[RMDB]
RNA sequence: GGGAACGACUCGAGUAGAGUCGAAAAGCGGUAGUUCGCUACCGCAAAAAAUCCUAAGUCAGCUGAUGACCGGUGGGAAGCGAGGAUCUAUCGGAAACGAUAGGGAGCUUGCCACCGCAAGGCUGAUAUGGAAAAAAGACUGGAUUCGUCCAGUCAAGGCCUAAACAAGAUUCGUCUUGUUUAGGCCAAAAGAAACAACAACAACAAC
Reactivity to 2A3 in 0.01 (KOAc 150mM, MgCl2 10mM, bicine 150mM(pH8.5), 24C), signal-to-noise 1, nucleotides 027 to 156: g030c000g010g020u000a020g010u020u050c030g030c060u010a000c000c000g010c000a000a000a000a000a000a000u030c000c020u050a140a000g030u010c020a010g010c030u020g020a230u120g020a200c190c030g020g020u020g000g020g070a000a000g030c020g000a280g050g000a020u000c000u000a000u000c000g060g040a210a070a040c030g020a000u000a000g000g030g000a020g010c000u000u000g200c000c000a000c000c000g000c000a000a010g000g000c010u000g000a000u000a050u010g000g050a000a040a000a000a000a180g000a000c000u000g000g000a000u020u100c230g030u000c170c000a000g000u000c000a010a050

The record gives the reactivity of an RNA of 207 nucleotides to 2A3. Values cover nucleotides 27 to 156. The RNA was probed in 150 mM KOAc, 10 mM MgCl2 and 150 mM bicine (pH 8.5) at 24 C.